Conditions: 150 mM KOAc, 10 mM MgCl2 and 150 mM bicine (pH 8.5), 24 C. The record gives the reactivity of an RNA of 207 nucleotides to DMS and 2A3. The 2A3 profile rests on 3,068 reads. 2A3 adducts were read by reverse transcription with SuperScript II with manganese.

RNA sequence: GGGAACGACUCGAGUAGAGUCGAAAAGCGUCCAAGCCCUAGCGCGGGCGAUCGUCGCGCUAGUCAAUCCGCCGGCACGCCGUGUGCUGGCGCAACACCAGGAGGUAGUGCAGGGAUGACCGACGAGUUGACGCUCACGGAUGACGAGCGGGAGGCCUAUCAUAUGCUUCUUCGGAAGCAUAUGAUAAAAAGAAACAACAACAACAAC
Reactivity to DMS in 0.01 (KOAc 150mM, MgCl2 10mM, bicine 150mM(pH8.5), 24C), signal-to-noise 2, nucleotides 027 to 156: g010c040g010u000c030c040a070a160g020c050c090c010u000a080g020c020g020c010g010g000g010c050g020a030u010c080g010u010c000g000c010g040c010u010a050g030u010c070a060a130u000c050c010g030c030c000g010g010c010a030c020g040c060c200g020u000g060u000g010c000u000g010g050c020g000c050a040a070c050a070c000c010a080g030g020a110g020g030u000a040g040u000g000c010a120g000g000g000a130u000g010a080c000c010g030a090c030g000a100g000u000u010g010a040c040g010c000u010c030a110c060g030g040a090u000g000a150c050g000a050g030c010g020g000g050a070g030g020c070c060
Reactivity to 2A3 in 0.01 (KOAc 150mM, MgCl2 10mM, bicine 150mM(pH8.5), 24C), signal-to-noise 4, nucleotides 027 to 156: g070c070g060u060c030c020a060a000g030c010c010c020u010a010g000c010g010c020g020g080g050c070g060a230u180c080g060u020c000g030c000g000c020u010a020g040u060c030a050a080u040c020c030g000c000c000g030g000c000a000c040g160c130c120g250u220g000u030g080c040u050g000g000c000g000c000a010a040c020a070c050c020a030g030g050a050g000g050u080a040g030u060g100c060a060g020g080g030a050u060g090a040c010c030g020a030c010g010a010g060u060u090g070a040c010g010c020u030c010a030c040g060g020a060u110g020a020c080g010a010g060c010g000g020g010a030g030g020c010c010